[RMDB]
RNA sequence: GGGAACGACUCGAGUAGAGUCGAAAAACGCGUCAUUGCAAGAAAUGAUAAACGUCCAGGAAAAGUCGGACUUGUAAGCGGUGGAGGUUCUGGUCACGAGCCGGCUCAUGCUGGUUAUGUGGGUCGACUGCUAAAUCAGUUUCGACUGAUUUAGCAGAAAAGAAACAACAACAACAAC
Reactivity to DMS in 0.01 (KOAc 150mM, MgCl2 10mM, bicine 150mM(pH8.5), 24C), signal-to-noise 3, nucleotides 027 to 126: a060c070g030c090g020u000c030a060u000u000g000c120a100a100g010a090a070a020u000g010a040u010a050a110a110c080g000u010c020c030a080g020g010a110a060a080a080g020u000c050g010g020a120c050u000u010g000u000a070a070g000c050g010g010u010g010g010a090g010g000u000u000c030u010g000g000u010c040a050c070g010a050g030c010c000g010g000c010u000c160a060u010g020c030u000g000g000u000u010a040u020g020u000g020g000g010u000c040g020a090
Reactivity to 2A3 in 0.01 (KOAc 150mM, MgCl2 10mM, bicine 150mM(pH8.5), 24C), signal-to-noise 2, nucleotides 027 to 126: a020c020g000c000g030u020c010a060u000u070g020c110a090a050g090a130a210a020u080g030a050u070a060a160a040c050g070u040c040c000a060g190g020a100a070a040a020g090u070c050g050g000a050c000u050u120g080u120a110a000g000c040g030g060u000g010g010a000g000g040u090u110c020u040g040g000u000c000a000c060g020a010g000c080c000g000g000c010u040c060a010u210g000c000u010g000g110u110u040a210u110g010u030g010g080g020u030c010g030a020
The record gives the reactivity of an RNA of 177 nucleotides to DMS and 2A3. The 2A3 profile rests on 1,198 reads. DMS adducts were read by reverse transcription with MarathonRT. The reactions ran in a buffer of 150 mM KOAc, 10 mM MgCl2 and 150 mM bicine (pH 8.5), at 24 C.